RNA sequence: GGGAACGACUCGAGUAGAGUCGAAAAGUUGAUAGACAAGGUGUUCACCCGGUGGGAUGUCCAGUACACGCCGGUGCGGCUUGCCGAUCUGGAUGCGGUGGGUGCCGCGAUUACUCCGCGCACCCGGGCAAAGUGGGUAUUUCGAUACCCACUUUGCAAAAGAAACAACAACAACAAC
Reactivity to 2A3 in 0.01 (KOAc 150mM, MgCl2 10mM, bicine 150mM(pH8.5), 24C), signal-to-noise 1, nucleotides 027 to 126: g030u010u060g000a040u050a090g040a020c040a030a070g070g200u030g080u100u120c010a040c010c090c050g000g010u050g040g110g040a130u020g010u000c000c000a020g000u050a030c020a010c010g010c000c000g020g020u030g000c020g050g000c000u000u050g080c040c020g010a030u040c060u080g140g020a030u070g090c030g120g040u130g030g000g000u010g050c080c080g000c050g000a000u000u010a040c050u000c160c010g010c020g000c050a030c070c010c060g000g000
Reactivity to DMS in 0.01 (KOAc 150mM, MgCl2 10mM, bicine 150mM(pH8.5), 24C), signal-to-noise 3, nucleotides 027 to 126: g010u010u010g010a110u000a080g000a040c040a020a050g010g020u000g010u010u010c050a040c130c010c030g030g010u000g020g000g020a090u010g010u000c060c140a150g020u010a110c050a090c050g000c020c010g000g000u000g010c030g010g010c010u000u000g010c020c020g010a050u000c030u010g020g010a090u030g000c060g010g010u020g010g000g010u010g000c060c040g020c020g020a070u000u020a140c170u000c080c020g000c040g000c030a030c000c010c000g020g010
Conditions: 150 mM KOAc, 10 mM MgCl2 and 150 mM bicine (pH 8.5), 24 C.
This 177-nucleotide RNA was probed chemically with 2A3 and DMS.
DMS adducts were read by reverse transcription with MarathonRT.
It was measured as part of the RMDB library OK2TRN.
For 2A3 the reverse transcriptase was SuperScript II with manganese.
Reactivities are rounded to 0.1 and cut off at 0 and 3.
The DMS profile rests on 3,067 reads.